Conditions: 150 mM KOAc, 10 mM MgCl2 and 150 mM bicine (pH 8.5), 24 C. Chemical mapping of a 177-nucleotide RNA with DMS and 2A3. The DMS profile rests on 1,374 reads. Values cover nucleotides 27 to 126. DMS adducts were read by reverse transcription with MarathonRT.

RNA sequence: GGGAACGACUCGAGUAGAGUCGAAAAGACGCAGGAUCGCAGGUCAGGAUACGAGAUCGCCCUUGAUCAGGGUGCACUGGCUGCGUUCUUGUCGUGGCUGGAGUCCCGACCUUCACCGCGCACACGAACCCCAUGGAUGGUUCGCCAUCCAUGGGGUAAAAGAAACAACAACAACAAC
Reactivity to DMS in 0.01 (KOAc 150mM, MgCl2 10mM, bicine 150mM(pH8.5), 24C), signal-to-noise 2, nucleotides 027 to 126: g020a100c090g040c010a000g020g010a010u000c050g030c020a050g030g030u010c010a030g000g000a230u010a150c300g000a150g020a100u000c030g000c030c020c050u000u010g010a090u000c300a090g010g000g010u000g000c200a070c010u000g000g000c000u000g000c020g000u000u000c080u000u000g010u000c040g020u000g060g010c300u030g010g000a080g000u000c010c020c000g030a160c090c020u000u000c020a100c030c010g000c000g000c190a030c110a090c040g010a160
Reactivity to 2A3 in 0.01 (KOAc 150mM, MgCl2 10mM, bicine 150mM(pH8.5), 24C), signal-to-noise 2, nucleotides 027 to 126: g080a040c090g000c020a050g040g020a040u000c010g040c030a010g040g190u060c000a010g030g060a060u100a300c120g010a060g000a150u200c000g020c020c000c000u080u140g200a200u170c100a010g040g000g000u010g030c040a030c120u010g010g000c000u020g000c000g010u040u050c040u030u050g050u070c020g030u010g040g000c090u020g020g010a010g000u040c000c000c000g070a100c000c020u020u030c040a000c030c000g000c020g020c010a010c010a000c050g100a090